[RMDB]
RNA sequence: GGGAACGACUCGAGUAGAGUCGAAAAUAUCAGCCUGGCCAGUUCGUCGGGCCGCAGCAGUUGCUCGCCGGGCAGCCACCUCAGCCCUCGCUCAGGCAUGCAGUAGCUGCACCGCAGGUUGCAGCGGAAUGUGUAAUGAAUUCGUUCAUUACACAUUAAAAGAAACAACAACAACAAC
Reactivity to DMS in 0.01 (KOAc 150mM, MgCl2 10mM, bicine 150mM(pH8.5), 24C), signal-to-noise 9, nucleotides 027 to 126: u010a100u010c100a110g000c030c020u000g010g010c020c070a130g010u000u000c090g020u010c050g010g000g010c020c070g010c070a080g020c170a120g010u000u000g010c020u000c060g010c050c040g000g000g000c030a120g000c030c040a060c050c030u000c080a090g000c030c030c020u000c110g000c040u000c060a090g010g000c040a080u000g010c090a070g010u000a110g010c010u000g000c010a080c020c020g000c150a070g010g010u010u000g010c020a030g010c010g010g000
Reactivity to 2A3 in 0.01 (KOAc 150mM, MgCl2 10mM, bicine 150mM(pH8.5), 24C), signal-to-noise 8, nucleotides 027 to 126: u150a030u070c030a010g020c010c010u020g010g000c020c030a080g060u090u110c030g030u030c030g040g000g000c020c010g000c010a050g050c010a030g020u090u060g010c010u030c040g040c020c010g000g010g020c010a010g010c020c020a040c000c020u060c020a030g010c000c010c000u030c030g000c010u050c030a060g020g020c020a010u090g000c020a030g030u140a040g010c010u010g000c010a020c010c020g110c040a040g030g060u090u060g000c020a000g000c000g020g030